The record gives the reactivity of an RNA of 177 nucleotides to 2A3 and DMS. It was measured as part of the RMDB library RFMREP.

RNA sequence: GGGAACGACUCGAGUAGAGUCGAAAAUCCAAAGCCAGUGAUUGUCAAACAGAACGUAAAUUAAUGCGGCUAUCACUCCACAAUGUUGAGCCGGCUUUCCAGGGCUACUGCAUUACUUUUCGGCUCGGUAGUUUAGUUAGUUCGCUAACUAAACUACAAAAGAAACAACAACAACAAC
Reactivity to 2A3 in 0.01 (KOAc 150mM, MgCl2 10mM, bicine 150mM(pH8.5), 24C), signal-to-noise 5, nucleotides 027 to 126: u000c010c000a080a020a010g050c030c020a020g000u020g040a050u060u040g030u070c040a070a070a090c030a080g080a100a030c060g070u140a080a070a100u130u170a090a040u140g030c020g020g000c010u010a010u050c010a010c020u040c040c010a080c020a080a080u070g020u070u060g050a010g000c020c010g050g020c020u090u070u030c050c020a030g060g000g000c020u080a070c020u120g000c000a020u060u080a090c030u070u070u040u090c020g010g010c010u000c000g030
Reactivity to DMS in 0.01 (KOAc 150mM, MgCl2 10mM, bicine 150mM(pH8.5), 24C), signal-to-noise 4, nucleotides 027 to 126: u010c030c020a140a110a110g010c050c060a030g010u010g000a030u000u010g020u000c020a040a070a060c060a050g000a030a060c060g010u010a060a100a110u000u010a040a040u000g000c060g000g000c010u000a050u010c020a040c010u000c080c070a090c130a090a060u000g010u010u000g000a050g020c030c010g000g000c120u000u000u000c060c100a070g000g000g030c030u000a040c070u000g010c050a040u010u000a090c090u010u000u010u000c020g010g010c030u000c050g020

Overview:
For DMS the reverse transcriptase was MarathonRT.